[RMDB]
Structure probing data (2A3 and DMS) for a 177-nucleotide construct.
The RNA was probed in 150 mM KOAc, 10 mM MgCl2 and 150 mM bicine (pH 8.5) at 24 C.
Values cover nucleotides 27 to 126.
RNA sequence: GGGAACGACUCGAGUAGAGUCGAAAAUCAUUUAUUACUUCUGGAAUUUUAGACCCAGAAAGAUACAACUAUACAAGCCAGAGAGCCAGUCAGAGGGCGCUACCAUGCAAACUAGGGCUGGCUACUCUCAAAUUACACAUUUCGAUGUGUAAUUUGAAAAAGAAACAACAACAACAAC
Reactivity to 2A3 in 0.01 (KOAc 150mM, MgCl2 10mM, bicine 150mM(pH8.5), 24C), signal-to-noise 4, nucleotides 027 to 126: u050c010a030u060u090u300a140u110u110a120c010u000u000c000u010g010g030a040a060u110u100u170u210a170g050a040c010c000c020a000g020a020a060a000g020a000u090a050c050a110a030c130u130a030u140a290c060a140a050g120c070c040a010g010a000g000a000g010c000c000a000g010u000c000a000g010a010g060g010g000c010g020c000u090a300c020c090a030u230g000c000a020a000a020c000u000a000g040g000g000c000u020g030g000c000u020a010c000u000c000
Reactivity to DMS in 0.01 (KOAc 150mM, MgCl2 10mM, bicine 150mM(pH8.5), 24C), signal-to-noise 6, nucleotides 027 to 126: u050c080a080u030u010u010a060u040u020a110c080u010u000c000u020g000g010a100a080u030u020u030u050a150g010a140c190c000c000a020g000a000a020a050g010a100u000a060c210a090a090c180u020a090u010a090c140a080a100g010c140c130a050g000a010g010a040g000c000c000a000g010u000c000a010g020a010g000g000g000c300g000c010u000a070c270c240a090u020g010c020a050a300a170c000u000a040g000g000g000c000u000g000g000c000u000a000c000u000c000